RNA sequence: GGGAACGACUCGAGUAGAGUCGAAAAGCUAGACUGGGCUCCACGGUAAUUCCCGAUUCCUUGAUGACCCUCGAAACAGUCCAGCUUUGAUAGGGAGGAGCCCUGAGCUGGGGUCACACUGGUCCACGCAUCGAGCUAUGUUCGCAUAGCUCGAUGCAAAAGAAACAACAACAACAAC
Reactivity to DMS in 0.01 (KOAc 150mM, MgCl2 10mM, bicine 150mM(pH8.5), 24C), signal-to-noise 1, nucleotides 027 to 126: g010c020u000a020g000a110c020u020g020g000g040c010u010c000c040a190c230g000g050u000a130a130u000u010c040c000c000g000a150u000u020c070c080u000u000g020a140u000g000a040c000c020c050u020c130g010a080a080a100c130a050g000u010c050c020a000g000c010u000u010u000g000a070u000a070g000g040g010a170g040g000a090g000c010c020c040u000g010a030g000c110u000g020g040g050g000u000c040a080c050a080c100u020g030g040u000c040c060a040c190
Reactivity to 2A3 in 0.01 (KOAc 150mM, MgCl2 10mM, bicine 150mM(pH8.5), 24C), signal-to-noise 1, nucleotides 027 to 126: g000c000u000a030g050a090c020u070g020g070g000c020u020c030c030a110c090g090g070u110a060a050u130u080c000c000c040g000a190u200u100c060c050u080u130g030a100u040g150a140c000c080c000u070c100g180a140a170a040c030a050g000u070c040c000a020g000c000u040u120u050g140a190u170a090g060g020g000a140g050g000a040g080c050c040c030u050g070a020g010c040u020g010g000g080g050u060c010a030c020a020c010u030g070g020u000c030c020a030c020